[RMDB]
RNA sequence: GGGAACGACUCGAGUAGAGUCGAAAACAACUUCGCGGUUGAUUUCCAGCAUGAUUUCGGUAGCCAGAAUACCAGACAGUUCAGCAUCAGCAUCCAUACCGUGAACAGCGCGGAGGUCUUGUGCUAAUUCGAUAGAGUAAGCAGCUUUCAGCUGACGAAUGGACUAUGAAUUCGUUCAUAGUCCAUUAAAAGAAACAACAACAACAAC
Reactivity to DMS in 0.01 (KOAc 150mM, MgCl2 10mM, bicine 150mM(pH8.5), 24C), signal-to-noise 5, nucleotides 027 to 156: c020a050a060c030u010u000c100g020c100g010g050u020u000g010a110u010u000u010c020c020a150g000c050a100u010g000a150u010u000u020c010g020g030u010a080g020c040c090a170g020a100a140u000a110c020c020a180g020a100c090a100g010u000u010c060a090g020c040a090u000c090a060g030c030a050u010c030c030a090u000a080c010c010g000u000g030a030a120c080a050g000c040g000c020g040g000a040g020g020u000c040u010u000g020u000g010c030u010a060a130u000u000c060g010a200u000a110g010a100g030u000a080a090g000c010a050g010c040u000u010u000c080a110g010c020u000g000a090c060g010
Reactivity to 2A3 in 0.01 (KOAc 150mM, MgCl2 10mM, bicine 150mM(pH8.5), 24C), signal-to-noise 6, nucleotides 027 to 156: c010a010a020c020u100u090c090g030c100g050g010u010u040g030a120u060u050u000c030c020a020g030c050a110u090g090a140u120u120u120c060g030g000u020a030g040c030c030a070g060a190a040u070a090c030c010a030g070a090c040a050g040u050u190c050a000g020c010a040u020c010a020g020c010a040u030c030c000a050u060a190c000c030g050u020g080a140a080c040a090g130c030g010c030g030g010a020g010g000u020c010u060u020g000u000g010c010u040a060a090u130u090c050g050a080u080a140g090a030g050u060a100a020g020c010a000g010c010u050u220u130c090a010g000c010u030g030a050c030g040